Description: This 170-nucleotide RNA was probed chemically with 2A3 and DMS.

[RMDB]
RNA sequence: GGGAACGACUCGAGUAGAGUCGAAAAAUCAAGUGAUGUUAUGUUUGAAGAUGCCCAAGGUUUGAAAAAGUUCUACAAAGAAGUUAGAGCUUACCUAGGAAUCUCUUCUGCUUGUGACGGUCUUGCUACGCAGCCAACUUCGGUUGGCUGAAAAGAAACAACAACAACAAC
Reactivity to 2A3 in 0.01 (KOAc 150mM, MgCl2 10mM, bicine 150mM(pH8.5), 24C), signal-to-noise 5, nucleotides 027 to 129: a010u090c040a040a040g050u060g180a070u050g090u080u090a060u090g100u060u110u160g020a030a000g030a020u100g020c010c010c000a000a000g090g010u010u170u300g150a080a010a000a000a000g010u010u000c000u000a000c020a070a240a040g220a130a040g050u100u030a020g020a020g000c000u000u000a010c000c000u000a020g020g010a040a050u010c000u000c000u030u000c000u060g040c010u100u100g060u010g040a020c040g010g010u000c000u010u030g000c000u070a030c060g000
Reactivity to DMS in 0.01 (KOAc 150mM, MgCl2 10mM, bicine 150mM(pH8.5), 24C), signal-to-noise 4, nucleotides 027 to 129: a070u050c090a020a000g050u040g030a120u000g000u040u040a070u030g020u060u050u020g040a020a030g030a030u020g000c150c000c020a030a040g000g050u080u050u070g000a070a020a040a030a010g030u000u000c000u010a020c000a020a090a130g050a120a060g030u090u000a030g000a000g030c020u000u000a030c040c000u010a140g000g090a130a080u040c130u020c020u000u000c030u030g020c070u000u000g030u020g010a000c000g030g000u050c030u000u100g040c060u010a100c150g010
2A3 adducts were read by reverse transcription with SuperScript II with manganese. Conditions: 150 mM KOAc, 10 mM MgCl2 and 150 mM bicine (pH 8.5), 24 C.